[RMDB]
RNA sequence: GGGAACGACUCGAGUAGAGUCGAAAAUUAUGACAUCGAACUUGUCACAGGAAAGCAAAAUAUUCUCCUGCGCAAGUAUGGCCGUGGUGGUUAUCACUACACCCCAUUCCACUAUGAGCGAGACAACGCUUACACUUUACUUCGGUAAAGUGUAAGCAAAAGAAACAACAACAACAAC
Reactivity to 2A3 in 0.01 (KOAc 150mM, MgCl2 10mM, bicine 150mM(pH8.5), 24C), signal-to-noise 2, nucleotides 027 to 126: u070u030a070u110g040a000c010a050u040c080g040a030a050c000u010u030g110u170c060a020c010a030g000g040a030a080a000g080c140a110a080a160a080u190a130u080u040c040u000c000c000u010g020c000g000c010a010a020g000u020a070u050g090g000c020c040g030u010g020g000u010g020g040u080u070a130u180c010a010c100u100a030c030a110c020c010c000c000a020u070u000c030c010a040c030u000a040u090g100a070g040c030g010a000g010a030c040a030a010c060
Reactivity to DMS in 0.01 (KOAc 150mM, MgCl2 10mM, bicine 150mM(pH8.5), 24C), signal-to-noise 2, nucleotides 027 to 126: u010u010a050u010g010a020c110a080u000c140g060a090a070c020u010u000g000u020c020a010c000a030g000g000a010a080a050g030c270a060a050a200a140u020a120u010u020c100u000c000c030u000g010c070g020c000a000a010g010u000a080u010g010g000c060c010g030u010g030g040u000g000g000u010u010a090u000c080a010c090u010a020c060a140c040c030c010c010a120u000u000c010c030a040c090u010a050u010g030a100g020c030g000a130g010a100c180a030a040c110
The record gives the reactivity of an RNA of 177 nucleotides to 2A3 and DMS.
Values cover nucleotides 27 to 126.
As a SHAPE reagent, 2A3 marks flexible, mostly unpaired nucleotides at the ribose 2'-OH.
For 2A3, 1,934 sequencing reads were counted.
The data come from the RNA Mapping Database (RMDB), library 15KREP.
The reactions ran in a buffer of 150 mM KOAc, 10 mM MgCl2 and 150 mM bicine (pH 8.5), at 24 C.